[RMDB]
RNA sequence: GGGAACGACUCGAGUAGAGUCGAAAAGAUAUGGACAACGAGGUGCAACGCAAUGAUGUCGGAAACGAUUGAGCGUUGAACUACACCUACGUUGUCCUAAGUCAAAACACCUGGUUCGCCAGGUGAAGGCAUAACAGUUCUUCGGAACUGUUAUGCCAAAAGAAACAACAACAACAAC
Reactivity to DMS in 0.01 (KOAc 150mM, MgCl2 10mM, bicine 150mM(pH8.5), 24C), signal-to-noise 2, nucleotides 027 to 126: g000a040u010a300u000g000g000a010c010a010a000c020g060a040g000g010u000g000c000a000a030c000g060c000a170a150u000g030a070u000g000u010c000g010g010a060a060a100c000g020a010u000u000g000a190g000c000g000u000u000g000a040a010c090u020a300c000a000c010c000u000a110c000g000u000u000g000u000c000c000u000a010a070g030u000c000a070a070a110a090c010a010c000c010u000g020g010u000u010c280g010c000c000a010g010g030u000g000a000a050
Reactivity to 2A3 in 0.01 (KOAc 150mM, MgCl2 10mM, bicine 150mM(pH8.5), 24C), signal-to-noise 2, nucleotides 027 to 126: g050a000u060a020u080g030g010a000c000a000a000c000g000a000g000g040u020g070c030a000a010c000g000c000a110a300u300g080a070u300g070u020c020g000g000a040a030a000c030g000a010u030u140g020a020g050c000g010u020u050g000a000a010c030u170a000c000a000c010c010u070a200c000g000u000u000g000u000c000c000u000a000a010g000u030c000a000a000a060a120c020a000c030c020u020g070g020u090u050c290g010c050c020a000g000g000u000g010a010a000

An RNA of 177 nucleotides, treated with DMS and 2A3 and read out base by base. Conditions: 150 mM KOAc, 10 mM MgCl2 and 150 mM bicine (pH 8.5), 24 C. The 2A3 profile rests on 2,372 reads.